RNA sequence: GGGAACGACUCGAGUAGAGUCGAAAAAUAACUGUAAAGUUUUGAAUCAUGAAUACUUUAUUGGUGCCUAUUCGCCAAUAUUUAUGAGUAGAAAUAGAGUUAGACAAUGGGAUGAACAGGCAUUUACAAUUACCCUAAUGUUCGCAUUAGGGUAAUUAAAAGAAACAACAACAACAAC
Reactivity to 2A3 in 0.01 (KOAc 150mM, MgCl2 10mM, bicine 150mM(pH8.5), 24C), signal-to-noise 5, nucleotides 027 to 126: a020u030a000a040c000u020g100u210a060a080a130g040u040u030u030u030g110a090a030u030c010a000u020g030a050a020u110a160c080u170u260u120a080u050u050g020g010u030g050c060c080u170a190u120u220c030g000c000c010a000a000u000a010u020u030u010a030u030g020a020g060u110a010g070a040a010a000u070a020g120a020g050u030u060a020g010a060c070a120a150u100g050g000g040a030u060g020a070a020c030a060g090g000c010a040u020u080u060a050c050
Reactivity to DMS in 0.01 (KOAc 150mM, MgCl2 10mM, bicine 150mM(pH8.5), 24C), signal-to-noise 6, nucleotides 027 to 126: a080u030a020a040c040u000g000u050a060a100a130g010u000u000u010u010g010a160a270u000c020a010u010g010a050a030u010a060c260u030u050u040a040u000u000g000g010u000g010c210c180u010a170u040u030c020g010c010c000a000a020u000a000u000u000u010a020u000g000a040g000u010a230g000a010a020a030u010a070g010a040g000u000u000a040g000a060c120a060a070u020g000g000g010a050u010g020a030a040c100a060g010g010c100a040u030u000u010a060c150
The data come from the RNA Mapping Database (RMDB), library OK1LIB. Chemical mapping of a 177-nucleotide RNA with 2A3 and DMS. Values cover nucleotides 27 to 126. For DMS the reverse transcriptase was MarathonRT. The reactions ran in a buffer of 150 mM KOAc, 10 mM MgCl2 and 150 mM bicine (pH 8.5), at 24 C. 2A3 adducts were read by reverse transcription with SuperScript II with manganese.